RNA sequence: GGGAACGACUCGAGUAGAGUCGAAAAGAUAUGGAUGGUUUAUGACGUAACCCGUUGAACCCCAUAUCGGUUUUUUUCGCUGUUCGGAAACGAACAGAACUACGAAAAAAACCGAUAUGGCUCAGCGUGUGCCUACCGUCAUUAACCAUCCUAAGUCGAAAACGAAAGUGUUCGCACUUUCGUUUUCAAAAGAAACAACAACAACAAC
Reactivity to 2A3 in 0.01 (KOAc 150mM, MgCl2 10mM, bicine 150mM(pH8.5), 24C), signal-to-noise 1, nucleotides 027 to 156: g030a040u090a040u170g000g000a000u000g000g020u000u010u020a020u000g000a000c000g000u010a010a040c010c010c010g010u000u000g000a010a040c100c000c020c000a010u010a000u000c000g010g000u020u010u000u000u000u000u000c010g000c000u000g010u000u000c010g050g050a090a100a090c020g000a000a000c010a010g000a030a010c220u300a050c030g000a010a000a000a000a000a000a000c010c020g010a000u000a000u000g000g000c010u000c000a000g000c010g040u160g070u150g100c020c030u090a080c120c040g000u000c000a000u000u010a000a010c000c010a000u000c000c000u000a000a000g030u030c050